[RMDB]
An RNA of 207 nucleotides, treated with 2A3 and read out base by base. The 2A3 profile rests on 407 reads.
RNA sequence: GGGAACGACUCGAGUAGAGUCGAAAAUUGGCGAAUGCCUGUGGAUCUACAUUUGUUGCGGGUUCGAGAACCGUCAGAGCCCGGCUCUGUAGCUCAAUGGUAGAGCGGUGUAUUCACAUAAACUUGUAAAAGACACGUGCCUUCGGGCACGUGUCAAGUACUCGAUACACUUCGGUGUAUCGAGUACAAAAGAAACAACAACAACAAC
Reactivity to 2A3 in 0.01 (KOAc 150mM, MgCl2 10mM, bicine 150mM(pH8.5), 24C), signal-to-noise 1, nucleotides 027 to 156: u120u000g020g020c080g090a290a100u220g010c000c000u040g040u020g000g000a030u000c030u090a020c020a060u020u020u030g080u040u060g010c000g000g000g000u000u010c050g040a110g020a300a150c090c030g150u120c130a090g000a000g020c000c010c000g000g000c000u020c010u050g050u040a040g000c000u040c060a080a140u040g140g000u090a050g020a050g020c070g040g000u030g000u040a070u020u060c010a000c010a040u240a080a040a110c120u140u020g080u160a110a120a040a040g000a000c000a000c000g000u000g010c050c000u050u020c150g040g000g010c050a000c050g000u000g000u000c000a020a000